RNA sequence: GGGAACGACUCGAGUAGAGUCGAAAAGAUCGGGUGUCCGCACUAAGUUCGGCAUCAAUAUGGUGACCUCCCGGGAGCGGGGGACCACCAGGUUGCCUAAGGAGGGGUGAACCGGCCCAGGUCGGAAAAGUUUGAUAAUGUUCGCAUUAUCAAACUUAAAAGAAACAACAACAACAAC
Reactivity to 2A3 in 0.01 (KOAc 150mM, MgCl2 10mM, bicine 150mM(pH8.5), 24C), signal-to-noise 7, nucleotides 027 to 126: g030a040u050c030g010g010g010u060g060u050c020c030g060c020a040c050u100a050a080g120u080u080c040g020g000c000a010u010c010a020a120u240a100u110g000g000u010g030a080c010c000u040c010c020c000g040g090g040a150g120c090g000g000g010g000g010a050c120c010a010c000c000a000g010g020u010u010g000c000c000u020a040a020g050g030a030g000g120g020g010u040g030a060a090c050c000g020g000c010c000c000a030g000g020u030c010g020g000a130a120
Reactivity to DMS in 0.01 (KOAc 150mM, MgCl2 10mM, bicine 150mM(pH8.5), 24C), signal-to-noise 7, nucleotides 027 to 126: g010a040u010c020g000g000g010u020g010u040c030c020g010c050a090c050u020a060a260g000u010u010c110g010g000c010a020u000c020a090a110u040a090u010g010g010u000g000a090c050c010u000c000c000c000g000g010g040a170g010c040g010g000g000g000g010a040c050c000a010c010c000a030g010g010u000u000g000c010c010u010a070a070g010g000a300g000g000g000g010u010g010a120a090c170c030g000g000c010c010c020a070g010g010u010c020g010g000a060a050